[RMDB]
This 207-nucleotide RNA was probed chemically with 2A3. Conditions: 150 mM KOAc, 10 mM MgCl2 and 150 mM bicine (pH 8.5), 24 C.

RNA sequence: GGGAACGACUCGAGUAGAGUCGAAAAACAGUCAGUACGCUGACUGAGGGAAACGGGAGCCGGGCUUGGGACAAGAGCCAUCCCAAGUCCAAGGCCAAGUAGGCUAUAGUGAUGGUACGCCAUCACAAAAACUGGUCUACCUUCGGGUAGACCAGAAGUGACGUAAAGGGUUCGCCCUUUACGUCACAAAAGAAACAACAACAACAAC
Reactivity to 2A3 in 0.01 (KOAc 150mM, MgCl2 10mM, bicine 150mM(pH8.5), 24C), signal-to-noise 2, nucleotides 027 to 156: a000c000a020g000u010c000a000g010u040a070c230g070c070u000g010a010c000u010g000a060g030g070g020a110a070a030c050g060g000g030a040g020c010c050g020g010g030c000u000u000g000g000g010a000c040a160a090g030a010g120c000c000a000u000c000c010c010a000a000g000u000c030c010a040a050g030g000c000c000a030a060g100u130a030g100g020c090u100a020u130a190g000u020g000a000u010g040g020u030a010c220g040c030c000a000u020c000a000c000a000a000a000a000a110c010u010g000g000u010c000u000a000c000c010u030u090c120g030g000g000u000a000g010a010c000c000a000g010a000a020